Chemical mapping of a 307-nucleotide RNA with DMS and 2A3. The RNA was probed in 150 mM KOAc, 10 mM MgCl2 and 150 mM bicine (pH 8.5) at 24 C. For DMS, 10,724 sequencing reads were counted.
RNA sequence: GGGAACGACUCGAGUAGAGUCGAAAACAACUGGCUUCGGCCAGUUGAACGCCAGUCUUCGGACUGGCGAAGAACCUGCGUUCGCGCAGGUUCAACUCUGCGUACGCGCAGAGAGGUCUAACUACGGUUAGACCAAGGACGCGGUAGCGAAGAACCAUCGACUGCGACUUAGCGAGCCUGCCCUGGCAGUGGGAGCCUGAAGCAGGCACGGGCGAAGAACACUGUCAGGUCGCUGAGUCGGCGUCCCAGUUGAUGGGGAGCUACCUAAGAUCGAGUUCGCUCGAUCUAAAAGAAACAACAACAACAAC
Reactivity to DMS in 0.01 (KOAc 150mM, MgCl2 10mM, bicine 150mM(pH8.5), 24C), signal-to-noise 3, nucleotides 027 to 266: c010a020a010c000u010g010g000c010u020u030c220g020g000c020c020a020g000u010u000g010a150a200c030g010c000c010a010g010u000c000u000u040c200g020g010a010c000u010g000g000c000g010a030a050g000a020a020c000c010u000g010c000g010u010u030c200g040c000g020c010a020g000g010u000u000c020a090a180c020u000c000u010g000c010g010u010a150c210g050c040g000c000a000g000a020g000a070g000g010u010c000u010a010a010c000u000a090c160g020g010u000u000a010g010a010c000c000a100a040g010g010a090c270g010c150g000g010u010a010g010c000g000a080a180g010a150a230c020c010a010u000c010g010a010c000u000g000c010g000a010c000u000u000a020g020c000g010a040g010c140c100u000g010c260c000c000u000g000g010c000a000g020u000g000g000g000a090g000c000c000u000g010a060a090g010c100a040g010g000c030a060c040g000g000g010c000g000a100a140g000a180a130c000a000c000u000g010u000c000a020g000g010u000c010g010c000u000g000a000g000u000c000g000g010c050g010u000c030c090c000a020g010u010u000g010a010u010g000g000g010g000a050g010c020u000a000c000c020u000a030
Reactivity to 2A3 in 0.01 (KOAc 150mM, MgCl2 10mM, bicine 150mM(pH8.5), 24C), signal-to-noise 4, nucleotides 027 to 266: c000a000a000c000u010g000g020c010u060u060c300g170g000c020c000a000g000u000u000g000a060a010c020g000c000c000a000g000u010c000u010u140c260g050g000a000c000u000g000g000c010g000a010a030g000a000a000c000c000u000g010c010g030u030u090c300g010c000g010c090a000g000g000u000u000c000a000a010c000u000c000u010g010c000g020u040a090c240g000c000g000c150a000g000a000g020a070g010g000u000c000u000a000a000c010u030a030c250g100g000u000u000a000g000a000c010c000a010a050g100g010a050c110g040c100g180g000u000a000g000c020g020a160a020g000a010a040c000c000a000u000c000g010a000c000u010g040c030g000a000c000u020u000a010g000c000g010a020g070c000c140u130g050c020c010c000u000g010g000c000a000g000u010g000g010g020a020g010c010c000u030g030a070a010g070c060a040g050g030c040a020c030g010g000g010c000g050a140a020g010a040a010c000a000c000u000g000u010c000a000g010g000u010c010g000c000u010g000a000g000u000c000g000g010c060g040u060c000c020c000a000g000u010u000g000a000u000g000g000g010g020a010g000c010u000a000c000c000u010a050

2A3 adducts were read by reverse transcription with SuperScript II with manganese.